[RMDB]
RNA sequence: GGGAACGACUCGAGUAGAGUCGAAAACUUCGCUUUUUAGAACAGCGAGGAUCUUAUGAGUUGAGCUUUUGUUAUUUGAGACUUUAUCUCGGGCUCCAUACAAUAUGUUCGUAGUAAAGAUCCUCACGCUGUUCGGGGAAUUCGUUCCCCGAACAGCAAAAGAAACAACAACAACAAC
Reactivity to 2A3 in 0.01 (KOAc 150mM, MgCl2 10mM, bicine 150mM(pH8.5), 24C), signal-to-noise 2, nucleotides 027 to 126: c010u010u010c000g010c030u160u030u110u060u300a200g050a070a000c000a030g010c010g070a000g010g000a010u020c020u020u070a040u170g070a040g120u070u050g000a000g040c010u000u070u000u090g030u190u110a090u150u080u150g030a030g030a110c000u110u070u140a100u210c120u050c030g000g080g060c000u000c000c000a000u070a000c060a000a050u030a030u290g010u000u060c040g000u010a020g040u000a000a190a000g000a000u000c000c000u030c000a050c020